[RMDB]
RNA sequence: GGGAACGACUCGAGUAGAGUCGAAAAAUGUAGCCCAGUAGCGAUUGUGGCGGAAGAGGCCCAGCUCCUGUACGCAGAGGAACCAGAACCCGUGAUGAGCGAGGAAGAAGAGGCCAUGAUAGAUCAGACGUUAACCGUAAUUCGUUACGGUUAACGUAAAAGAAACAACAACAACAAC
Reactivity to 2A3 in 0.01 (KOAc 150mM, MgCl2 10mM, bicine 150mM(pH8.5), 24C), signal-to-noise 1, nucleotides 027 to 126: a010u120g030u080a040g010c000c000c020a020g060u030a020g000c060g040a060u020u090g050u070g050g020c010g050g000a040a000g080a040g080g010c000c000c030a010g000c010u000c010c010u080g000u070a040c050g000c050a020g050a050g130g000a030a030c050c010a030g040a080a030c010c010c010g000u060g020a140u110g000a020g040c050g020a090g050g000a030a090g030a060a020g050a020g030g000c020c000a010u060g040a050u070a040g110a060u100c090a020g040
Reactivity to DMS in 0.01 (KOAc 150mM, MgCl2 10mM, bicine 150mM(pH8.5), 24C), signal-to-noise 5, nucleotides 027 to 126: a100u000g020u000a120g020c010c010c020a100g020u010a080g030c070g000a100u010u000g020u010g010g000c040g000g010a100a080g010a130g000g000c040c010c060a140g000c040u000c030c070u000g010u020a100c090g020c090a070g010a080g000g010a060a080c070c070a110g010a090a110c040c020c020g010u000g000a100u000g000a120g000c030g010a100g000g010a060a060g010a080a070g000a130g000g010c060c040a040u000g010a080u020a090g010a100u000c090a130g000

The record gives the reactivity of an RNA of 177 nucleotides to 2A3 and DMS.
DMS (dimethyl sulfate) methylates the pairing face of unpaired adenines and cytosines.
For DMS the reverse transcriptase was MarathonRT.
2A3 adducts were read by reverse transcription with SuperScript II with manganese.
The RNA was probed in 150 mM KOAc, 10 mM MgCl2 and 150 mM bicine (pH 8.5) at 24 C.